[RMDB]
RNA sequence: GGGAACGACUCGAGUAGAGUCGAAAACAUUAAUGAGUACUGGGUGCUGACGGCUGCUCAUGUUGUGGAGGGAAACAGGGAGCCAACAAUGUAUGUUGGGUCCACCUCAGUGCAGACCUCACGGCUGGCAAAAUCCAAGAUGCUCACUCCUGAGCAACUCACGUAAAUUAUUCGUAAUUUACGUGAGAAAAGAAACAACAACAACAAC
Reactivity to DMS in 0.01 (KOAc 150mM, MgCl2 10mM, bicine 150mM(pH8.5), 24C), signal-to-noise 2, nucleotides 027 to 156: c070a080u010u000a070a090u010g060a090g020u000a070c070u010g010g000g030u000g020c080u010g010a090c040g020g000c020u000g030c060u020c080a080u020g010u010u010g040u000g000g000a100g030g040g030a130a100a150c090a100g030g040g010a120g000c010c010a010a020c020a060a120u000g030u010a100u020g020u000u010g010g020g010u000c010c020a100c040c030u000c030a120g020u010g020c050a100g000a260c020c020u010c080a090c090g020g030c030u020g010g010c040a050a070a070a070u000c010c010a070a080g010a180u000g030c030u000c030a060c070u000c120c100u020g000a060g030c030a040a140
Reactivity to 2A3 in 0.01 (KOAc 150mM, MgCl2 10mM, bicine 150mM(pH8.5), 24C), signal-to-noise 4, nucleotides 027 to 156: c040a040u180u300a170a090u130g010a010g050u050a020c040u020g000g050g000u070g030c050u040g040a030c060g030g030c010u030g010c010u050c080a100u120g030u140u090g050u120g040g030a010g000g000g020a080a080a040c040a070g110g000g000a010g150c030c000a000a000c000a020a100u300g070u300a100u070g000u040u010g000g000g040u000c010c000a050c010c010u020c040a020g030u010g020c020a000g020a180c010c000u030c040a040c020g020g040c010u050g090g000c040a080a040a030a080u010c040c010a010a040g060a100u060g000c000u000c010a060c040u060c020c080u030g010a020g040c010a020a090